Conditions: 150 mM KOAc, 10 mM MgCl2 and 150 mM bicine (pH 8.5), 24 C. The record gives the reactivity of an RNA of 207 nucleotides to 2A3.
[RMDB]
RNA sequence: GGGAACGACUCGAGUAGAGUCGAAAAUUACACAAGUUGUCAAAACCUCUGACAUACAGUAAAAGCAGUUCUAAGAGGAAAAUAUAUAGCACUCAAUGCCUACAUCAAAAAGUCUGAAAAAGCACAAAUUGGCAACCUAAUGUCACACCUCAAGGAAGAUGCACCAUCAUUUCGAUGAUGGUGCAUCAAAAGAAACAACAACAACAAC
Reactivity to 2A3 in 0.01 (KOAc 150mM, MgCl2 10mM, bicine 150mM(pH8.5), 24C), signal-to-noise 1, nucleotides 027 to 156: u120u150a030c040a000c000a020a180g020u000u020g020u020c000a000a000a050a300c020c030u000c040u030g010a010c010a050u270a050c000a000g030u130a000a080a000a040g040c050a040g000u130u000c070u180a040a020g010a070g020g000a150a090a000a000u090a060u010a040u010a020g010c030a020c030u040c120a110a000u010g000c000c040u070a060c020a100u040c040a020a030a070a070a000g060u040c050u020g120a180a030a030a030a010g030c070a040c040a070a070a090u020u040g020g010c020a060a060c000c060u130a130a000u150g020u080c020a050c000a000c160c050u120c110a060a010g130g000a030a110